The record gives the reactivity of an RNA of 207 nucleotides to DMS and 2A3. It was measured as part of the RMDB library OK3TST. For 2A3, 7,227 sequencing reads were counted. The RNA was probed in 150 mM KOAc, 10 mM MgCl2 and 150 mM bicine (pH 8.5) at 24 C.

RNA sequence: GGGAACGACUCGAGUAGAGUCGAAAAGUAUAGAAGCAUGAGACCGCAUGCGAUAUACGAUGAAUCUCGGUCGAAUCCGUUGUGCGAAAGCACUUCGGUAAUGCAUAUCGGUAGACAGAUCUGCCCGGAUCAGCUACCGUAAUUAGUACGGGCAAGACGUAUCCAGUAUAUUCGUAUACUGGAUACGAAAAGAAACAACAACAACAAC
Reactivity to DMS in 0.01 (KOAc 150mM, MgCl2 10mM, bicine 150mM(pH8.5), 24C), signal-to-noise 3, nucleotides 027 to 156: g030u000a040u010a060g000a210a250g000c000a030u000g010a090g020a170c090c060g010c010a030u010g000c010g000a300u010a030u010a050c030g040a190u000g000a170a170u020c050u000c010g030g000u010c000g010a150a150u000c000c010g020u000u000g020u010g000c010g000a120a130a270g030c010a000c000u000u000c000g000g030u000a040a100u000g000c120a180u000a110u000c010g000g000u000a040g020a140c050a110g010a050u000c030u010g020c040c100c040g010g000a110u010c010a110g000c010u000a030c010c010g010u000a010a050u000u000a120g030u000a080c000g010g020g010c060a160a130g000a180
Reactivity to 2A3 in 0.01 (KOAc 150mM, MgCl2 10mM, bicine 150mM(pH8.5), 24C), signal-to-noise 6, nucleotides 027 to 156: g020u010a040u020a060g100a140a010g010c000a000u020g010a020g030a180c050c050g050c060a010u040g010c010g010a010u010a010u000a040c110g010a020u140g120a090a100u080c080u030c080g000g030u040c020g020a020a050u030c000c000g000u000u010g000u000g010c010g070a070a020a010g000c000a000c000u000u000c010g000g010u060a100a040u120g050c070a060u100a050u200c010g010g000u010a010g060a090c110a050g000a010u000c020u020g000c010c020c000g010g000a010u010c010a010g010c000u000a000c000c000g000u010a030a040u090u130a020g090u020a030c030g000g000g010c030a030a020g070a020